An RNA of 177 nucleotides, treated with 2A3 and read out base by base. The 2A3 profile rests on 903 reads.
RNA sequence: GGGAACGACUCGAGUAGAGUCGAAAAACAGGUACCUCGAUACGUCGAGGUACCUGAUCGUGUUACGUAUACUGAAGGUAUACCGGAUAGGAUACACUCAGGAUACAUUCAGUAUACGUUUACGAAAACUAGUCCACCUCUUCGGAGGUGGACUAGUAAAAGAAACAACAACAACAAC
Reactivity to 2A3 in 0.01 (KOAc 150mM, MgCl2 10mM, bicine 150mM(pH8.5), 24C), signal-to-noise 2, nucleotides 027 to 126: a000c040a000g000g000u000a000c000c000u000c010g000a010u000a070c180g060u020c000g000a020g040g000u000a000c000c000u000g000a000u010c000g000u060g110u100u080a010c000g000u010a000u000a000c000u010g010a000a020g000g070u000a000u020a300c000c000g030g050a120u080a220g180g000a040u100a200c100a070c140u060c070a070g000g000a020u000a000c000a000u000u030c000a000g000u000a000u000a030c050g000u000u000u010a000c000g030a010a010a010
The RNA was probed in 150 mM KOAc, 10 mM MgCl2 and 150 mM bicine (pH 8.5) at 24 C. The data come from the RNA Mapping Database (RMDB), library RFM100.